[RMDB]
RNA sequence: GGGAACGACUCGAGUAGAGUCGAAAAGACGCCACCAGCGAACAAGCCCGAAGUCAGAGACCUGGACCGGAACUUCGUAGCGCCAGCUCAGGCCCGAACAAGCCGCUUCCGGCGGGGGGCGCGGUCGGGACGGCCUCUCUAGCCCCGCCGUCUCGUCCAUACGGAUUCAUUUCGAUGAAUCCGUAUGAAAAGAAACAACAACAACAAC
Reactivity to DMS in 0.01 (KOAc 150mM, MgCl2 10mM, bicine 150mM(pH8.5), 24C), signal-to-noise 1, nucleotides 027 to 156: g020a130c010g010c020c020a060c020c020a090g020c020g000a120a070c060a110a180g000c020c000c010g020a110a090g020u010c070a190g010a120g010a030c010c010u040g010g020a040c030c000g000g000a080a040c030u000u000c110g010u000a070g030c070g000c020c040a050g010c020u010c020a080g020g080c000c030c010g010a100a090c050a080a100g040c030c030g010c040u000u000c050c020g040g000c060g020g040g010g050g020g040c060g000c030g010g000u000c020g030g010g020a060c030g000g010c010c010u000c040u010c050u020a200g000c050c030c010c020g020c020c000g020u000c000u000c000g010u000c040
Reactivity to 2A3 in 0.01 (KOAc 150mM, MgCl2 10mM, bicine 150mM(pH8.5), 24C), signal-to-noise 2, nucleotides 027 to 156: g050a000c000g000c000c020a060c030c010a090g020c030g070a080a060c040a100a010g040c010c020c010g020a090a040g050u060c050a020g010a010g030a170c060c040u090g020g040a060c030c030g010g070a080a080c010u120u110c060g050u050a040g010c030g040c050c030a010g020c060u070c080a040g000g060c000c030c030g040a060a030c030a130a020g050c040c010g000c000u020u040c010c010g020g000c020g000g010g000g000g000g000c050g010c030g030g030u010c000g010g010g040a040c010g020g010c010c020u120c000u000c030u060a060g010c000c000c000c000g000c000c000g010u010c020u030c010g030u020c020
The data come from the RNA Mapping Database (RMDB), library OK3TST. An RNA of 207 nucleotides, treated with DMS and 2A3 and read out base by base. For 2A3, 1,460 sequencing reads were counted. Values cover nucleotides 27 to 156. Conditions: 150 mM KOAc, 10 mM MgCl2 and 150 mM bicine (pH 8.5), 24 C.